RNA sequence: GGGAACGACUCGAGUAGAGUCGAAAAAGCACUAAAACACAGCUAAAAGGUAACCUUUUCAUGUAGGAUGGUUUAUUUGGUAGUGUUUGGUUGUGCACCAGAGAGGAUGGAAGGAGUUGUUUCAUAGCCUUUCAAACAAGACCAGCAUUGUCAAACACCAUAGGUCAGGGUUCGCCCUGACCUAUGGAAAAGAAACAACAACAACAAC
Reactivity to 2A3 in 0.01 (KOAc 150mM, MgCl2 10mM, bicine 150mM(pH8.5), 24C), signal-to-noise 1, nucleotides 027 to 156: a000g000c000a000c020u020a040a000a000a020c010a000c000a030g040c020u050a010a010a010a150g230g020u070a040a040c030c000u020u050u150u270c190a190u270g120u170a160g060g070a060u070g030g000u030u050u060a090u050u050u030g020g000u010a100g000u000g000u020u050u010g060g000u060u070g020u000g000c020a000c040c000a000g100a000g000a020g190g010a070u110g000g070a010a080g020g000a040g020u000u000g070u050u050u020c090a110u130a110g010c000c000u000u080u000c020a070a010a010c070a120a000g050a070c050c060a040g000c090a150u090u180g090u130c000a050a010a060c110a010
The record gives the reactivity of an RNA of 207 nucleotides to 2A3.
It was measured as part of the RMDB library OK3TST.
The RNA was probed in 150 mM KOAc, 10 mM MgCl2 and 150 mM bicine (pH 8.5) at 24 C.
The 2A3 profile rests on 614 reads.